[RMDB]
RNA sequence: GGGAACGACUCGAGUAGAGUCGAAAAGUCUAUCUUCUCACGCAAAGACCUGGCGUAUCGUAUGAGCAUGAUGGACGAUAUGCGCGAAGUAAUGGGUGCUGCACUUGCUUCACUUGGCUACAACGUAGCGGUAUAUACCUUUCGAGGUAUAUACCGCAAAAGAAACAACAACAACAAC
Reactivity to DMS in 0.01 (KOAc 150mM, MgCl2 10mM, bicine 150mM(pH8.5), 24C), signal-to-noise 4, nucleotides 027 to 126: g010u040c010u020a030u010c020u000u000c010u000c010a070c090g030c050a060a080a090g010a080c020c030u010g000g040c020g010u000a060u010c090g020u010a100u040g000a030g030c090a040u010g000a040u030g000g000a020c010g010a060u030a030u000g020c000g000c050g010a100a100g010u000a050a090u010g000g000g040u010g000c030u000g020c020a050c050u010u000g020c100u000u000c010a020c040u010u030g000g000c030u010a040c110a090a120c160g020u010a120
Reactivity to 2A3 in 0.01 (KOAc 150mM, MgCl2 10mM, bicine 150mM(pH8.5), 24C), signal-to-noise 9, nucleotides 027 to 126: g020u010c030u040a070u000c010u050u030c000u010c000a030c020g050c030a070a090a060g080a100c010c060u060g080g000c020g050u050a080u100c070g020u120a080u210g030a020g030c080a040u110g030a030u040g100g030a010c000g000a010u040a060u120g020c050g000c010g070a040a000g030u090a070a060u070g040g020g020u050g010c010u010g010c010a020c040u040u080g010c000u020u030c010a030c060u050u070g050g000c010u080a030c040a130a010c100g090u100a030
This 177-nucleotide RNA was probed chemically with DMS and 2A3. The reactions ran in a buffer of 150 mM KOAc, 10 mM MgCl2 and 150 mM bicine (pH 8.5), at 24 C. For 2A3, 12,816 sequencing reads were counted.